Structure probing data (2A3) for a 177-nucleotide construct. For 2A3 the reverse transcriptase was SuperScript II with manganese. The 2A3 profile rests on 346 reads. Source: RMDB library OK1LIB, as collected in RNAgym. The reactions ran in a buffer of 150 mM KOAc, 10 mM MgCl2 and 150 mM bicine (pH 8.5), at 24 C.

[RMDB]
RNA sequence: GGGAACGACUCGAGUAGAGUCGAAAAACAAUAAGGAUUUUUGUCAGGUAUUAAAAGAGUAUUUGUCUAAUGAAGAUGAUAUCGAUAUAUUAGGCAUAGCUAAGGAUGGAAUUGAAGCAUUAGACUUGAUUUAGUGGCAGUUCGCUGCCACUAAAUCAAAAGAAACAACAACAACAAC
Reactivity to 2A3 in 0.01 (KOAc 150mM, MgCl2 10mM, bicine 150mM(pH8.5), 24C), signal-to-noise 1, nucleotides 027 to 126: a010c070a010a010u300a000a000g000g040a050u070u070u040u140u180g050u040c030a010g000g170u300a140u060u300a210a160a020a000g050a010g070u080a040u020u000u060g010u000c000u000a000a000u080g000a000a100g000a000u090g000a000u000a130u300c000g000a000u000a000u000a000u160u000a010g000g000c000a000u010a000g000c120u090a040a050g020g140a040u000g000g120a000a130u010u000g050a070a070g010c150a050u080u080a000g000a170c000u000u000